[RMDB]
RNA sequence: GGGAACGACUCGAGUAGAGUCGAAAAGGUGUUUAUCGCACGGUUCCACCAGUGUGAGAAGGCUCCGGUGGAUUGCUCUAUUGGUUUGGGCUGUGUAAUGGUUGCGCGCUGAGGGUAUGACCAUUGGCUAAAUAUUAAUUUUCGAAUUAAUAUUUAGAAAAGAAACAACAACAACAAC
Reactivity to DMS in 0.01 (KOAc 150mM, MgCl2 10mM, bicine 150mM(pH8.5), 24C), signal-to-noise 8, nucleotides 027 to 126: g010g010u000g010u000u000u010a060u010c050g010c010a020c020g010g000u010u020c030c150a060c030c020a090g010u000g010u010g000a040g010a230a110g000g000c030u010c030c050g010g030u010g010g000a080u010u020g010c030u000c040u010a050u010u010g010g010u000u010u020g000g000g000c020u000g010u000g000u010a050a060u020g000g010u000u000g010c060g010c050g010c050u010g000a100g000g000g010u000a060u020g010a090c030c040a090u010u010g010g010
Reactivity to 2A3 in 0.01 (KOAc 150mM, MgCl2 10mM, bicine 150mM(pH8.5), 24C), signal-to-noise 6, nucleotides 027 to 126: g050g010u020g020u040u030u050a130u060c020g010c000a010c000g010g020u120u070c010c010a010c000c010a030g000u010g000u030g060a050g030a060a050g110g010c010u010c040c030g040g000u040g020g020a050u040u110g010c000u010c010u020a070u030u060g040g000u060u060u110g020g010g000c020u010g010u010g010u070a040a050u090g020g000u020u040g020c040g000c000g000c050u030g020a050g010g030g010u030a040u050g020a010c000c000a050u040u050g040g000